[RMDB]
Chemical mapping of a 177-nucleotide RNA with DMS. Source: RMDB library TTRDEL, as collected in RNAgym.
RNA sequence: GGGAACGACUCGAGUAGAGUCGAAAAGAUAUGGACUACCUUCGAUAAGCGUCGGGUCGGAAACGACCCAGACGCUUUUGACGAAGAUGUCCUAAGUCAAACAGGAAUGAGUUCGCUCAUUCCUGAACCACUCGAGAAAGUUCGCUUUCUCGAGUGGAAAAGAAACAACAACAACAAC
Reactivity to DMS in 0.01 (KOAc 150mM, MgCl2 10mM, bicine 150mM(pH8.5), 24C), signal-to-noise 1, nucleotides 027 to 126: g000a020u010a220u000g000g000a020c000u000a110c180c000u000u000c000g000a200u020a080a020g020c000g050u000c000g020g000g030u000c000g020g000a080a080a150c010g020a020c000c000c020a020g020a010c010g020c000u000u020u000u010g040a140c130g010a040a010g010a000u000g000u000c000c000u000a010a090g010u030c050a090a120a260c000a030g000g030a000a000u000g010a000g010u000u010c280g020c000u020c000a020u000u010c000c010u010g000a040a060